RNA sequence: GGGAACGACUCGAGUAGAGUCGAAAAAAGUUUGAUGUUAUCUUCAUGAGACUGUCAGGCGGUCUUAUGGGGGGUGGUGUUACUUCUUGGAGUUUUAUGCUUUUAUUCAGAUGUCUUCUUGAUUUACUAGAAGAACGUAAUAUCAUCAGCUGUCACGGCCAAAUUGAAUUUUCGAAUUCAAUUUGGCAAAAGAAACAACAACAACAAC
Reactivity to 2A3 in 0.01 (KOAc 150mM, MgCl2 10mM, bicine 150mM(pH8.5), 24C), signal-to-noise 2, nucleotides 027 to 156: a000a000g100u080u080u100g050a070u090g060u060u130a070u180c030u170u010c010a000u010g020a030g000a010c030u040g020u200c120a120g050g240c020g020g020u000c000u000u010a030u040g000g010g010g000g000g000u010g000g000u010g020u000u040a030c010u020u060c000u060u050g080g020a000g060u100u050u060u110a080u130g030c020u070u050u110u130a070u100u070c010a020g040a180u070g130u050c030u090u000c000u070u080g080a160u260u110u160a130c130u060a010g040a060a000g010a050a000c010g030u000a010a080u020a110u080c030a000u000c030a010g070c010u060g030u160c100a010c160g070